[RMDB]
RNA sequence: GGGAACGACUCGAGUAGAGUCGAAAAGACAACGGUGAGGCAUCUAGCCAGCGCUCACCAUCGCGACGCUCCAAACGCACACGCACAGCGACCGUCGGUGCCGAUAGCGAUGAGGAGGAUAUUGAGCGCAGAGCAAAAUAUUCGUAUUUUGCUCUGCAAAAGAAACAACAACAACAAC
Reactivity to DMS in 0.01 (KOAc 150mM, MgCl2 10mM, bicine 150mM(pH8.5), 24C), signal-to-noise 5, nucleotides 027 to 126: g000a120c100a070a060c070g010g020u000g000a050g030g010c030a080u010c100u000a140g000c070c080a150g020c040g010c010u010c010a070c020c010a070u010c070g010c050g010a150c220g010c020u000c040c030a040a150a060c060g000c040a060c160a180c190g000c040a050c060a080g010c060g000a090c190c090g000u000c080g000g000u000g010c010c030g000a100u000a100g000c020g010a050u000g010a300g010g010a070g000g000a080u010a080u000u000g010a300g010c140
Reactivity to 2A3 in 0.01 (KOAc 150mM, MgCl2 10mM, bicine 150mM(pH8.5), 24C), signal-to-noise 4, nucleotides 027 to 126: g080a030c060a110a000c110g000g030u030g010a030g010g010c030a060u030c110u130a080g060c020c050a020g030c130g050c020u000c000a020c000c000a010u010c020g000c020g060a090c040g040c050u000c010c000a040a050a010c010g000c030a040c000a000c060g030c010a040c020a110g030c030g150a120c090c040g170u220c030g020g010u020g000c010c010g080a070u150a040g020c050g280a300u030g020a020g030g000a010g030g020a040u060a060u110u150g050a030g010c050